[RMDB]
RNA sequence: GGGAACGACUCGAGUAGAGUCGAAAAUGCUUUCAAGGUCAUUUCUUUAUGGACCCCAUUCCCAUAAAUUCAGUAUCCAAAGAUGGUUGCUGUAUCUAUGGGAAUAAGGGUUCCAUAACGAAAUGAUGCAAACUGGUUCAUUCGUGAACCAGUUUGCAAAAGAAACAACAACAACAAC
Reactivity to 2A3 in 0.01 (KOAc 150mM, MgCl2 10mM, bicine 150mM(pH8.5), 24C), signal-to-noise 1, nucleotides 027 to 126: u130g050c070u040u080u130c070a110a110g230g020u010c000a000u000u000u000c000u000u000u000a000u000g000g000a000c000c050c000c000a030u000u030c000c000c000a000u000a000a030a000u030u010c030a000g020u020a020u000c010c000a030a260a040g290a290u210g020g000u000u020g000c000u000g000u000a000u040c000u000a000u000g000g000g000a030a000u000a010a040g000g000g000u060u040c000c000a000u000a000a000c020g000a000a000a000u020g000a020u010
This 177-nucleotide RNA was probed chemically with 2A3. It was measured as part of the RMDB library RFM100. The 2A3 profile rests on 834 reads.